[RMDB]
RNA sequence: GGGAACGACUCGAGUAGAGUCGAAAAAAUUGGUCUGCGAUUCAGACCAUGGUAGCAAAGCUACCUUUUUUCACUUCCUGUACAUUUACCCUGUCUGUCCAUAGUGAUUAAUGUAGCACCGCCUAAUUGAUUGUCUUAAAUUCGUUUAAGACAAUCAAAAAGAAACAACAACAACAAC
Reactivity to 2A3 in 0.01 (KOAc 150mM, MgCl2 10mM, bicine 150mM(pH8.5), 24C), signal-to-noise 9, nucleotides 027 to 126: a000a010u060u040g000g000u000c010u010g030c140g200a120u160u090c010a000g000a000c000c000a000u020g000g010u020a020g010c090a220a140a040g010c010u000a000c000c000u010u070u010u010u010u010c030a020c010u050u020c010c000u020g040u090a020c020a100u100u130u120a100c020c010c010u050g020u070c020u030g030u010c030c000a050u080a090g060u050g050a040u040u110a070a060u100g040u050a000g010c010a010c050c020g030c010c010u040a100a100u020
Reactivity to DMS in 0.01 (KOAc 150mM, MgCl2 10mM, bicine 150mM(pH8.5), 24C), signal-to-noise 8, nucleotides 027 to 126: a060a040u020u000g010g020u000c000u000g010c300g020a160u020u030c010a020g010a020c000c000a030u000g010g000u000a020g010c030a130a130a190g010c000u000a010c000c010u000u000u000u000u000u000c070a120c110u000u000c010c000u000g000u010a050c090a060u010u010u010a110c050c030c020u000g000u010c040u010g010u000c020c020a040u010a060g010u010g000a070u000u010a060a050u010g010u000a060g020c020a060c050c050g010c040c020u000a040a140u010